Chemical mapping of a 177-nucleotide RNA with DMS and 2A3. The RNA was probed in 150 mM KOAc, 10 mM MgCl2 and 150 mM bicine (pH 8.5) at 24 C. High 2A3 reactivity points to a flexible backbone, as in loops and unpaired stretches. 2A3 adducts were read by reverse transcription with SuperScript II with manganese.

RNA sequence: GGGAACGACUCGAGUAGAGUCGAAAAGAUAUGGAGGUCGUUGAUCGUGCUCCCGUUGAAAUCGGAAACGAUGGAGGGAACACGGGAGACCUCCUAAGUCAAAGUCGCGAGCUUCGGCUCGCGACAACCAUAUCCUAGGCUUCGGCCUAGGAUAUGGAAAAGAAACAACAACAACAAC
Reactivity to DMS in 0.01 (KOAc 150mM, MgCl2 10mM, bicine 150mM(pH8.5), 24C), signal-to-noise 1, nucleotides 027 to 126: g000a050u000a300u010g010g000a000g010g010u000c010g010u000u000g000a040u010c000g000u000g020c020u010c000c000c000g000u000u010g000a140a220a030u000c010g020g030a120a100a250c000g000a020u010g000g000a120g040g000g000a020a020c000a010c000g050g000g000a010g000a000c000c000u000c000c000u000a010a010g000u000c040a100a120a130g020u000c000g020c000g000a000g010c000u000u010c170g010g020c000u000c000g010c010g010a000c030a000a060
Reactivity to 2A3 in 0.01 (KOAc 150mM, MgCl2 10mM, bicine 150mM(pH8.5), 24C), signal-to-noise 1, nucleotides 027 to 126: g030a030u140a080u240g000g010a000g000g000u000c020g120u190u030g000a010u010c000g010u010g000c020u000c000c000c010g120u220u080g030a000a040a000u030c030g030g000a120a050a070c000g000a020u030g060g000a000g020g000g000a000a020c000a000c020g000g010g000a020g000a010c010c000u000c010c000u000a010a010g010u000c020a130a080a000g020u000c000g000c010g000a000g000c040u080u250c300g140g000c020u010c010g010c000g000a000c010a000a010